[RMDB]
RNA sequence: GGGAACGACUCGAGUAGAGUCGAAAACUCGGCUAUAAUAUAAUUAAUAGCUUUGAAUUUUUGAAGGGGUCGAGGUCGUCCUCUGGAGUGUCUGCCUACUUUAGCAGAUAUUCGAGUGAAGCGAUUUAGUUCAAUAUACAUUCGUGUAUAUUGAACUAAAAGAAACAACAACAACAAC
Reactivity to 2A3 in 0.01 (KOAc 150mM, MgCl2 10mM, bicine 150mM(pH8.5), 24C), signal-to-noise 6, nucleotides 027 to 126: c010u000c010g000g010c000u010a010u030a120a050u100a080u110a250a100u250u130a070a060u030a010g000c000u110u020u180g020a020a040u000u010u030u030u060g040a050a010g080g030g020g050u010c010g000a020g040g110u020c000g000u000c000c000u000c000u020g100g010a020g010u000g000u010c000u010g000c020c020u130a180c090u280u200u150a030g000c000a000g010a000u000a010u010u000c010g020a020g000u140g100a050a050g160c130g070a070u010u010u000
Reactivity to DMS in 0.01 (KOAc 150mM, MgCl2 10mM, bicine 150mM(pH8.5), 24C), signal-to-noise 2, nucleotides 027 to 126: c030u000c020g000g000c000u000a010u010a090a070u000a230u060a160a110u030u020a050a060u010a010g000c000u000u000u040g030a000a040u000u000u000u010u000g010a020a050g000g010g000g000u000c010g000a030g000g010u020c000g020u020c010c000u000c010u010g020g010a040g030u000g010u010c000u000g000c050c120u000a080c250u030u010u030a100g000c000a020g010a000u000a000u000u000c000g010a040g000u020g010a100a120g010c140g010a130u000u000u000